[RMDB]
Chemical mapping of a 207-nucleotide RNA with DMS and 2A3. Reactivities are given for positions 27 through 156. The DMS profile rests on 2,943 reads. The reactions ran in a buffer of 150 mM KOAc, 10 mM MgCl2 and 150 mM bicine (pH 8.5), at 24 C. Source: RMDB library VIROID, as collected in RNAgym. 2A3 is a SHAPE reagent: it acylates the 2'-hydroxyl of flexible nucleotides of all four kinds.

RNA sequence: GGGAACGACUCGAGUAGAGUCGAAAAUGCUCCACAGCUGUAAGGCUGUGGGCCCGAGAGAAGCGCUCUCUCUCGCUCUUCUGCUCCCCCUCGGCAUUGAGAUGUCCAUAGGCCAGGGGUGAGAUCCAACGGGAUCACAGCUGAUCUAAGGUGGGCACUACGGACAAUAGUUCGCUAUUGUCCGUAGAAAAGAAACAACAACAACAAC
Reactivity to DMS in 0.01 (KOAc 150mM, MgCl2 10mM, bicine 150mM(pH8.5), 24C), signal-to-noise 1, nucleotides 027 to 156: u020g000c010u000c080c010a000c010a100g010c040u000g030u010a120a300g000g010c020u030g030u000g000g020g010c050c070c000g000a100g010a050g010a080a100g030c070g060c090u000c070u000c090u020c040u000c000g020c020u000c030u000u000c070u020g000c040u010c000c010c000c030c000u000c140g030g010c030a210u010u000g010a210g010a210u010g010u000c060c060a170u010a120g010g020c030c030a080g000g010g000g040u010g010a020g000a030u000c030c070a130a300c080g000g020g000a040u000c000a060c010a070g010c030u000g000a140u010c040u000a100a120g020g040u000g000g030g050c010a220
Reactivity to 2A3 in 0.01 (KOAc 150mM, MgCl2 10mM, bicine 150mM(pH8.5), 24C), signal-to-noise 3, nucleotides 027 to 156: u090g010c050u100c140c010a020c000a040g040c070u060g070u180a070a040g040g000c000u000g000u000g000g010g010c000c010c010g060a070g010a000g010a030a010g020c040g010c030u030c000u010c010u020c040u080c280g010c000u020c000u100u010c010u030g000c010u020c030c000c000c000c010u020c060g000g000c000a020u070u110g070a090g020a100u250g120u090c080c020a060u100a080g110g000c000c000a000g000g010g000g020u120g010a000g000a010u050c090c030a110a070c030g000g010g010a010u020c000a000c020a010g040c010u050g000a040u100c030u080a070a020g050g000u010g000g000g010c000a000